Structure probing data (DMS and 2A3) for a 177-nucleotide construct. The data come from the RNA Mapping Database (RMDB), library OK1LIB. For 2A3 the reverse transcriptase was SuperScript II with manganese. The RNA was probed in 150 mM KOAc, 10 mM MgCl2 and 150 mM bicine (pH 8.5) at 24 C.
RNA sequence: GGGAACGACUCGAGUAGAGUCGAAAAUCACGUGUGUAAUGUCAACUAUGCUGAUAUUAUACACAAAGUAUGUAAGCAUAGAUAGACUACAUACUCAUUAGUCAGUAGUCUAUAAGAACUGACUGAAGAUAGUUAUCAGAUUCGUCUGGUAACUAUCAAAAGAAACAACAACAACAAC
Reactivity to DMS in 0.01 (KOAc 150mM, MgCl2 10mM, bicine 150mM(pH8.5), 24C), signal-to-noise 8, nucleotides 027 to 126: u020c040a100c180g010u000g000u000g010u010a000a010u000g010u000c000a040a150c010u010a020u010g010c030u010g000a030u020a020u000u010a010u000a010c020a030c040a090a080a110g000u030a050u040g010u020a090a080g020c010a020u000a020g000a080u010a030g010a020c000u000a010c010a080u020a040c030u010c280a130u020u030a060g010u000c130a120g020u010a020g000u010c010u000a030u010a110a120g010a100a100c150u010g000a110c020u000g010a120a120
Reactivity to 2A3 in 0.01 (KOAc 150mM, MgCl2 10mM, bicine 150mM(pH8.5), 24C), signal-to-noise 9, nucleotides 027 to 126: u130c050a060c130g010u010g010u000g000u010a010a030u060g000u010c000a010a020c040u010a000u040g000c000u000g010a020u000a020u050u020a010u010a010c030a000c020a020a020a010g180u130a070u240g210u120a050a030g010c010a000u010a010g020a020u050a010g010a020c000u000a000c010a060u070a010c010u040c090a160u080u200a010g010u010c050a010g000u020a010g010u000c010u030a060u020a050a010g020a040a050c110u130g110a010c010u050g020a070a020